[RMDB]
An RNA of 207 nucleotides, treated with 2A3 and read out base by base. For 2A3, 2,078 sequencing reads were counted. 2A3 adducts were read by reverse transcription with SuperScript II with manganese.
RNA sequence: GGGAACGACUCGAGUAGAGUCGAAAACUUACUCUUUUCUGUAAAGAGGAGACUGCUGGAUCCGCCGCCCAAGUUCGAGAUGGGCCAUCUCCGGGCGAGGAGUCGCGGGGGAAGCGAUCACCGCCCGAUAGGGGAUUCAAGGUAAAGAGCAUUGGAAGGUUAUUUUCUAGUUCGCUAGAAAAUAACCAAAAGAAACAACAACAACAAC
Reactivity to 2A3 in 0.01 (KOAc 150mM, MgCl2 10mM, bicine 150mM(pH8.5), 24C), signal-to-noise 3, nucleotides 027 to 156: c010u040u120a220c000u020c000u030u040u080u070c100u240g190u210a010a020a040g010a020g030g000a020g050a050c080u100g060c020u040g030g000a030u040c020c030g080c070c040g000c000c060c000a050a020g060u100u170c050g080a040g010a160u060g010g010g020c030c030a100u030c020u030c070c010g000g000g010c000g050a100g020g020a050g030u030c000g000c020g020g010g000g030g060a060a040g000c000g010a000u050c020a010c050c000g020c000c000c000g010a040u130a070g010g000g010g020a010u020u030c060a060a050g030g010u040a060a120a060g040a010g010c060a040u100u210g120g030a190a120